[RMDB]
RNA sequence: GGGAACGACUCGAGUAGAGUCGAAAAUCACACUCAGAAGCUGCCAGAAUAGAGAGCUUAGGAAUGGAGCUUGCACUACAAGUCCUUUGCAUACAAGAGUUAAGACGAUCUCAGGACACAGGAAAAGUCCACCCAUUUCUUUCGAGAAAUGGGUGGAAAAAGAAACAACAACAACAAC
Reactivity to DMS in 0.01 (KOAc 150mM, MgCl2 10mM, bicine 150mM(pH8.5), 24C), signal-to-noise 2, nucleotides 027 to 126: u050c110a200c090a130c090u000c040a040g020a040a070g000c000u050g030c030c010a130g010a050a090u020a080g000a110g000a040g000c000u000u020a020g070g040a070a030u010g040g020a110g000c000u000u070g000c050a130c050u030a030c070a140a010g000u000c030c000u010u040u000g000c090a040u000a100c190a090a060g000a060g050u030u010a050a060g000a000c010g030a030u000c000u010c110a060g000g000a000c110a060c100a040g020g000a050a010a100a120g010
Reactivity to 2A3 in 0.01 (KOAc 150mM, MgCl2 10mM, bicine 150mM(pH8.5), 24C), signal-to-noise 3, nucleotides 027 to 126: u060c000a030c050a030c090u070c040a040g000a230a020g010c060u140g050c010c040a020g060a100a000u190a140g170a020g020a020g070c040u100u090a040g090g060a150a090u160g010g000a000g000c020u030u080g020c090a070c080u100a070c060a130a000g040u020c010c000u020u030u040g050c020a100u140a200c040a040a060g010a010g060u090u100a060a000g050a070c040g090a050u000c000u000c060a020g000g010a010c000a000c000a040g170g090a060a050a000a010g030
The data come from the RNA Mapping Database (RMDB), library OK1LIB. Structure probing data (DMS and 2A3) for a 177-nucleotide construct. For DMS, 2,001 sequencing reads were counted. For 2A3 the reverse transcriptase was SuperScript II with manganese. The reactions ran in a buffer of 150 mM KOAc, 10 mM MgCl2 and 150 mM bicine (pH 8.5), at 24 C.